[RMDB]
RNA sequence: GGGAACGACUCGAGUAGAGUCGAAAAGAUAUGGAGCUGCGAGCGAGCGAUAAGCUUUGUGUCGGAAACGACAUGAGCUUUUGACGCUCUAGCAGCUCCUAAGUCAAAGCGGGUGUUCGCACCCGCACGGAAUGGGGUAGUUCGCUACCCCAUUCCGAAAAGAAACAACAACAACAAC
Reactivity to DMS in 0.01 (KOAc 150mM, MgCl2 10mM, bicine 150mM(pH8.5), 24C), signal-to-noise 1, nucleotides 027 to 126: g000a040u000a300u010g000g000a000g020c000u000g010c010g000a240g060c300g000a040g010c010g020a160u070a020a010g010c030u000u000u020g100u000g020u000c000g020g000a090a030a250c000g000a010c020a000u000g000a000g040c000u000u000u000u000g010a300c050g000c000u010c000u010a140g000c000a000g000c040u000c000c000u000a000a020g000u020c000a100a070a230g020c000g000g000g020u000g010u000u020c300g000c020a050c000c030c000g060c000a000
Reactivity to 2A3 in 0.01 (KOAc 150mM, MgCl2 10mM, bicine 150mM(pH8.5), 24C), signal-to-noise 1, nucleotides 027 to 126: g000a010u100a020u100g010g010a010g000c030u010g020c000g010a120g070c130g040a050g070c030g060a130u060a270a000g040c030u150u300u300g060u030g020u010c020g010g110a020a040a000c020g020a000c020a010u020g050a000g010c000u050u070u050u100g160a070c040g010c000u040c000u000a040g000c010a000g030c000u000c000c000u000a000a000g000u010c080a000a040a080g030c010g000g040g020u040g030u060u100c190g000c020a000c000c000c000g000c000a000
Source: RMDB library TTRDES, as collected in RNAgym.
An RNA of 177 nucleotides, treated with DMS and 2A3 and read out base by base.
The reactions ran in a buffer of 150 mM KOAc, 10 mM MgCl2 and 150 mM bicine (pH 8.5), at 24 C.
Values cover nucleotides 27 to 126.
For 2A3 the reverse transcriptase was SuperScript II with manganese.